[RMDB]
RNA sequence: GGGAACGACUCGAGUAGAGUCGAAAACUGCUCGGCCUUGACGGCCUGUUCUCCAGCGGCCUUGAAACGGGCCAUCUGCGUGGACAUUUGAUGCGCCAUCACCCGCUGUACCGAUAGCCGAUCGAUCUGACCUCAUUGGAUUCGUCCAAUGAGGUCAAAAAGAAACAACAACAACAAC
Reactivity to 2A3 in 0.01 (KOAc 150mM, MgCl2 10mM, bicine 150mM(pH8.5), 24C), signal-to-noise 1, nucleotides 027 to 126: c020u060g010c020u000c020g000g010c030c020u050u150g090a060c070g030g020c040c030u010g010u010u010c020u020c000c010a030g000c040g020g000c000c030u040u070g120a090a050a070c040g000g000g000c000c010a040u040c000u010g020c030g040u070g060g000a030c030a070u100u070u180g120a130u100g040c040g010c040c010a060u080c010a070c020c030c010g060c070u040g040u100a050c020c020g060a040u050a010g040c010c010g050a080u090c000g010a060u010c050
Reactivity to DMS in 0.01 (KOAc 150mM, MgCl2 10mM, bicine 150mM(pH8.5), 24C), signal-to-noise 3, nucleotides 027 to 126: c070u000g000c070u000c050g020g020c030c040u010u000g020a120c220g000g000c040c010u000g010u000u000c010u020c030c020a030g030c300g010g010c010c010u000u010g000a060a140a140c190g000g010g000c000c000a050u010c070u000g020c130g020u000g000g010a030c060a110u000u010u000g020a100u010g020c060g000c040c050a070u010c070a110c060c050c030g020c030u010g010u000a090c090c040g000a080u000a110g020c030c060g040a110u000c060g040a090u020c100